An RNA of 177 nucleotides, treated with 2A3 and DMS and read out base by base. The reactions ran in a buffer of 150 mM KOAc, 10 mM MgCl2 and 150 mM bicine (pH 8.5), at 24 C. DMS adducts were read by reverse transcription with MarathonRT. 2A3 adducts were read by reverse transcription with SuperScript II with manganese. The DMS profile rests on 1,958 reads.
RNA sequence: GGGAACGACUCGAGUAGAGUCGAAAAGCGGAGAUGUUCGCAUCUCCGCAAAUCCCUGGAUGCAGCGAGUUAAAACGGAUUCGUUGGCAAGUAUCCAUCGCAAAAGUAUUAGCUUCGGCUAAUACAACUAGUAAAAUUCGUUCGCGAAUUUUACUAGAAAAGAAACAACAACAACAAC
Reactivity to 2A3 in 0.01 (KOAc 150mM, MgCl2 10mM, bicine 150mM(pH8.5), 24C), signal-to-noise 3, nucleotides 027 to 126: g000c000g000g010a020g010a000u010g010u060u170c190g020c060a010u000c000u010c000c000g000c000a010a000a000u000c000c000c000u000g010g000a010u010g000c020a000g010c030g030a030g020u040u130a190a190a090a140c100g100g040a100u040u050c000g010u040u000g150g000c020a030a030g020u050a020u020c000c030a050u190c120g020c150a090a120a020a090g000u000a000u000u010a010g000c000u020u050c290g080g000c000u000a000a010u000a010c000a010a000
Reactivity to DMS in 0.01 (KOAc 150mM, MgCl2 10mM, bicine 150mM(pH8.5), 24C), signal-to-noise 2, nucleotides 027 to 126: g010c000g000g000a010g010a000u000g010u000u040c240g040c000a010u000c010u000c000c000g030c000a010a060a080u010c010c000c000u010g010g020a020u000g010c030a070g020c020g000a020g030u000u000a030a050a110a080c300g010g020a090u010u000c000g020u000u000g020g040c060a060a080g000u010a050u000c010c010a030u020c200g020c180a050a070a080a160g010u000a000u000u000a000g000c010u000u000c200g000g000c010u000a010a000u000a010c000a060a150